[RMDB]
This 177-nucleotide RNA was probed chemically with 2A3 and DMS.
The data come from the RNA Mapping Database (RMDB), library TTRDES.
For 2A3 the reverse transcriptase was SuperScript II with manganese.
RNA sequence: GGGAACGACUCGAGUAGAGUCGAAAAAAAGAUAUGGAUCUCAAACGAUCGAAGAACAUACACAAGACCAGUAUAUCGGAAACGAUAUACGUGAGUGUAUGGGAGAUCGUGAGAUCCUAAGUCAAAAUCUAACCUUUUGGUUCGCCAAAAGGUUAGAAAAAGAAACAACAACAACAAC
Reactivity to 2A3 in 0.01 (KOAc 150mM, MgCl2 10mM, bicine 150mM(pH8.5), 24C), signal-to-noise 1, nucleotides 027 to 126: a000a000a010g020a000u010a000u060g000g000a000u020c000u000c010a300a300a100c020g000a000u020c000g090a130a000g000a000a010c010a020u020a000c020a040c040a200a090g110a150c050c060a040g000u000a000u000a000u010c000g010g000a000a000a000c010g000a000u010a000u020a010c000g050u050g020a150g010u020g010u000a010u010g000g040g000a020g000a010u000c010g000u000g010a000g010a000u000c000c000u000a000a000g000u000c010a020a020a030a300
Reactivity to DMS in 0.01 (KOAc 150mM, MgCl2 10mM, bicine 150mM(pH8.5), 24C), signal-to-noise 2, nucleotides 027 to 126: a060a060a100g010a000u000a050u010g000g010a000u000c000u000c000a120a150a090c000g010a010u000c020g000a080a180g000a120a130c000a010u000a010c000a000c000a090a230g010a210c190c050a140g010u000a010u000a020u000c000g030g010a000a000a020c010g010a010u000a000u000a000c000g010u010g010a100g000u000g000u000a000u000g000g040g000a010g000a000u000c000g010u000g000a010g000a020u000c000c000u000a010a040g000u000c000a090a050a070a130